[RMDB]
RNA sequence: GGGAACGACUCGAGUAGAGUCGAAAACUGAGACGCUUCGGCGUCUCAGAAAUGGAACACAGGCGAAGGAAGCAAGAGCUAUCAUGGCAAUGACCACGUGGAAAACUCAUACGUUCGCGUAUGAGAACAACUAUGUUCCCUUCGGGGAACAUAGUUGAAAAGAAACAACAACAACAAC
Reactivity to 2A3 in 0.01 (KOAc 150mM, MgCl2 10mM, bicine 150mM(pH8.5), 24C), signal-to-noise 2, nucleotides 027 to 126: c000u000g000a010g000a010c000g010c050u040u050c160g120g000c000g000u000c000u010c000a000g000a000a000a020u120g010g040a050a000c050a000c020a080g090g000c030g030a070a040g050g020a030a020g060c030a100a000g060a000g100c000u020a020u210c030a050u080g040g030c010a030a090u050g040a070c030c030a060c110g030u070g040g020a030a030a060a050c000u000c000a000u000a020c000g040u020u030c300g000c000g100u000a010u010g000a020g000a010a000
Reactivity to DMS in 0.01 (KOAc 150mM, MgCl2 10mM, bicine 150mM(pH8.5), 24C), signal-to-noise 2, nucleotides 027 to 126: c010u000g000a030g010a020c010g030c000u000u010c220g060g030c000g010u000c000u000c000a000g010a020a060a070u010g000g030a080a040c050a040c060a040g010g020c080g030a070a070g010g020a070a100g030c050a120a090g010a100g010c020u000a040u010c070a040u000g000g010c020a100a070u000g020a090c030c020a040c130g000u000g000g000a080a060a070a140c000u000c000a000u010a000c000g020u010u020c210g000c000g000u000a000u000g000a010g000a050a070

Background: An RNA of 177 nucleotides, treated with 2A3 and DMS and read out base by base. For DMS the reverse transcriptase was MarathonRT. The reactions ran in a buffer of 150 mM KOAc, 10 mM MgCl2 and 150 mM bicine (pH 8.5), at 24 C.